[RMDB]
RNA sequence: GGGAACGACUCGAGUAGAGUCGAAAACGUAAUACAGUGAGUGGACGGAAGAAAUCCCCUUCCCACCUCCCCACUGUCCACUCACUGUCUUCCUAAGAGGAAAUAUAAAUCGGGGGUGGGAAGGGGAGCCAUUAUGCAGUUUCGACUGCAUAAUGGCAAAAGAAACAACAACAACAAC
Reactivity to DMS in 0.01 (KOAc 150mM, MgCl2 10mM, bicine 150mM(pH8.5), 24C), signal-to-noise 1, nucleotides 027 to 126: c230g000u000a160a100u040a020c000a050g000u000g050a010g020u000g000g000a040c010g010g000a120a020g000a060a100a070u000c000c000c000c000u000u000c000c000c000a000c020c000u000c000c000c170c090a130c100u010g000u000c000c000a010c020u000c000a040c000u000g030u000c100u000u000c000c010u000a110a140g000a140g050g020a240a080a040u050a070u010a010a150a090u160c100g000g000g000g000g000u000g000g000g020a000a000g000g000g000g000a090
Reactivity to 2A3 in 0.01 (KOAc 150mM, MgCl2 10mM, bicine 150mM(pH8.5), 24C), signal-to-noise 7, nucleotides 027 to 126: c060g110u100a090a040u200a170c010a000g010u000g000a000g000u000g010g010a010c030g040g010a030a040g060a050a130a060u090c000c000c000c000u000u000c000c000c000a000c020c000u030c060c070c020c020a050c020u030g010u000c000c000a000c000u000c030a000c000u000g000u000c000u020u000c010c000u040a070a040g060a070g190g150a040a140a020u300a050u090a050a110a060u280c100g000g000g000g010g000u000g010g000g000a000a000g010g000g000g000a000

Record summary
This 177-nucleotide RNA was probed chemically with DMS and 2A3. Source: RMDB library OK1LIB, as collected in RNAgym. For 2A3 the reverse transcriptase was SuperScript II with manganese. Conditions: 150 mM KOAc, 10 mM MgCl2 and 150 mM bicine (pH 8.5), 24 C.